Structure probing data (2A3 and DMS) for a 207-nucleotide construct.
RNA sequence: GGGAACGACUCGAGUAGAGUCGAAAAGAGAGAACGUUCGAGAGUGUACACACGUGUGUGUGUGAUCACACACUCUCUCGUGUUCGUGUUCGUACUCACACGAGUGAACGAGAUCGUGUUCGAGUGUGUACACGUGUACGUGAACUCGUGUGAACACCAGGAAGAAGAAUUUCGAUUCUUCUUCCUGAAAAGAAACAACAACAACAAC
Reactivity to 2A3 in 0.01 (KOAc 150mM, MgCl2 10mM, bicine 150mM(pH8.5), 24C), signal-to-noise 9, nucleotides 027 to 156: g150a000g020a000g010a030a020c050g040u130u100c060g050a020g000a010g020u060g050u130a040c040a000c020a020c100g050u080g030u070g000u030g000u010g030u080g280a160u220c030a040c010a000c000a010c070u000c000u000c000u000c020g020u030g020u040u050c070g000u030g040u050u060c070g030u060a060c040u010c010a000c000a000c000g000a000g010u010g020a020a000c010g000a030g020a130u080c010g000u010g020u040u070c070g030a160g130u220g050u140g000u100a000c000a000c000g000u030g030u070a050c000g000u000g000a000a000c000u000c000g000u000g000u010g000a000a000c010a010c010
Reactivity to DMS in 0.01 (KOAc 150mM, MgCl2 10mM, bicine 150mM(pH8.5), 24C), signal-to-noise 4, nucleotides 027 to 156: g000a160g000a110g030a090a030c020g010u000u000c080g010a060g010a080g020u000g020u000a250c000a030c010a020c000g030u000g030u000g030u010g010u000g020u010g000a100u000c090a110c150a050c010a040c000u000c020u000c020u000c030g020u000g010u010u000c050g010u010g000u000u010c040g000u000a090c100u000c030a030c000a010c010g000a030g030u000g010a240a060c030g010a150g000a140u000c020g020u000g020u010u000c040g030a180g000u000g030u010g030u000a030c030a010c000g020u000g020u000a120c030g010u000g000a200a080c010u000c010g010u000g020u010g010a020a030c030a060c060
For 2A3, 30,830 sequencing reads were counted. Conditions: 150 mM KOAc, 10 mM MgCl2 and 150 mM bicine (pH 8.5), 24 C.